[RMDB]
RNA sequence: GGGAACGACUCGAGUAGAGUCGAAAACAUCUUGUGUGGUCCACGUGUUGGAAUGGGACCACGUGGGCGUACCGUGCAAUGAUACGAGGGUUGAGACGGCUAGAGGGAUUAGUCGCCCGCGAAGUGACACCUUCAGAUCUUUCGAGAUCUGAGGGUGAAAAGAAACAACAACAACAAC
Reactivity to DMS in 0.01 (KOAc 150mM, MgCl2 10mM, bicine 150mM(pH8.5), 24C), signal-to-noise 9, nucleotides 027 to 126: c090a070u030c040u010u010g010u020g020u000g000g010u000c010c000a070c070g010u010g000u010u020g000g000a110a090u010g000g010g010a060c050c000a020c000g020u000g000g000g010c030g060u030a050c040c030g010u010g010c050a050a040u020g010a080u010a070c110g010a110g000g000g000u000u010g010a100g000a090c060g000g000c070u000a000g000a130g010g000g010a110u020u000a070g010u010c030g000c010c000c020g010c050g000a070a070g010u010g000a250
Reactivity to 2A3 in 0.01 (KOAc 150mM, MgCl2 10mM, bicine 150mM(pH8.5), 24C), signal-to-noise 6, nucleotides 027 to 126: c020a050u050c030u070u080g030u020g000u010g040g000u000c000c000a040c020g060u060g020u020u080g050g070a160a060u060g020g010g040a000c000c000a000c000g000u000g000g000g000c030g020u030a010c010c010g000u020g010c000a020a070u080g010a020u030a060c030g030a040g020g020g000u040u050g010a010g010a030c010g000g000c010u010a000g020a030g000g030g010a000u000u000a020g010u000c010g010c000c000c000g010c020g020a040a000g030u020g020a000
The record gives the reactivity of an RNA of 177 nucleotides to DMS and 2A3. For DMS, 87,570 sequencing reads were counted. Values cover nucleotides 27 to 126. For 2A3, 31,264 sequencing reads were counted. Conditions: 150 mM KOAc, 10 mM MgCl2 and 150 mM bicine (pH 8.5), 24 C.